[RMDB]
RNA sequence: GGGAACGACUCGAGUAGAGUCGAAAACAGAAAAAUGCAUAUCAAGCAACGUUUCAACGUAAUCCAGGAUUCAACGAAACAGAAAAAGGUAGUUAUGGAUCACCUAAAAUUAAAAAUAUUACAUUGACAUUAGGGGACACUUCGGUGUCCCCUAAUGAAAAGAAACAACAACAACAAC
Reactivity to 2A3 in 0.01 (KOAc 150mM, MgCl2 10mM, bicine 150mM(pH8.5), 24C), signal-to-noise 2, nucleotides 027 to 126: c010a170g240a040a030a030a000a030u150g000c020a060u100a090u300c110a000a110g130c060a010a010c050g110u010u040u020c110a130a160c040g000u040a010a010u030c020c000a000g040g040a010u030u020c000a010a010c000g000a000a220a000c060a110g220a030a020a000a060a000g170g050u140a040g000u100u260a170u040g010g000a000u010c050a260c000c000u160a250a180a180a140u300u120a130a050a000a000a100u100a050u050u100a040c150a300u010u050g000a060
Reactivity to DMS in 0.01 (KOAc 150mM, MgCl2 10mM, bicine 150mM(pH8.5), 24C), signal-to-noise 1, nucleotides 027 to 126: c010a190g120a060a050a080a070a020u000g030c050a050u000a000u000c080a020a120g010c160a070a110c300g070u000u000u000c100a110a100c000g000u000a110a000u000c050c070a030g010g000a030u000u000c000a160a060c130g000a050a020a060c070a000g000a000a030a010a100a180g000g000u000a000g050u000u040a080u080g060g000a060u010c140a040c070c010u000a010a030a010a150u080u050a020a100a010a000a000u010a050u000u010a070c030a080u000u030g020a220
Chemical mapping of a 177-nucleotide RNA with 2A3 and DMS. For 2A3, 546 sequencing reads were counted. The reactions ran in a buffer of 150 mM KOAc, 10 mM MgCl2 and 150 mM bicine (pH 8.5), at 24 C. The data come from the RNA Mapping Database (RMDB), library OK1LIB.